[RMDB]
RNA sequence: GGGAACGACUCGAGUAGAGUCGAAAAGUGAGACUUCACACGCCGAACGUAAACAGCAUUUCGCGCAAGUAAAUGAAUAUUGGAGCCAAUAUGACGUAGUUAUUUACACCCCGACUGUGUCCGCGGGUGUUAGUUUCGAACGUGAGCAUUUCCAUAACCGUCUGUGUUAAUUCGUUAACACAGACGGAAAAGAAACAACAACAACAAC
Reactivity to DMS in 0.01 (KOAc 150mM, MgCl2 10mM, bicine 150mM(pH8.5), 24C), signal-to-noise 2, nucleotides 027 to 156: g030u000g020a180g010a060c020u030u000c000a100c030a160c000g030c030c000g000a110a080c060g040u020a080a060a090c040a080g000c050a300u000u010u000c020g030c090g000c040a110a120g020u000a050a070a120u000g000a110a120u000a090u010u000g010g010a100g020c050c000a070a210u000a080u000g000a060c040g020u000a090g000u010u000a070u000u000u000a040c020a040c030c030c000c030g040a030c050u020g050u000g080u000c030c030g050c080g020g010g030u000g010u000u000a030g030u000u000u000c010g010a050a050c040g020u000g000a080g030c090a130u000u000u000c040c010a010u010a080a290
Reactivity to 2A3 in 0.01 (KOAc 150mM, MgCl2 10mM, bicine 150mM(pH8.5), 24C), signal-to-noise 3, nucleotides 027 to 156: g070u080g010a120g040a090c050u090u080c050a030c010a020c080g110c040c040g060a060a050c040g040u150a090a100a020c010a050g100c040a060u030u120u160c070g020c010g010c080a050a040g030u140a100a080a090u180g090a130a050u060a060u080u060g030g010a030g030c070c050a060a080u160a100u190g010a020c020g020u020a000g020u010u040a020u000u060u040a010c010a010c000c000c000c000g020a020c040u180g100u130g020u290c080c040g020c090g010g000g000u000g010u000u010a000g010u000u030u000c060g030a090a040c010g020u040g030a040g010c040a050u060u050u000c020c010a010u060a100a050

Chemical mapping of a 207-nucleotide RNA with DMS and 2A3.
For 2A3, 1,738 sequencing reads were counted.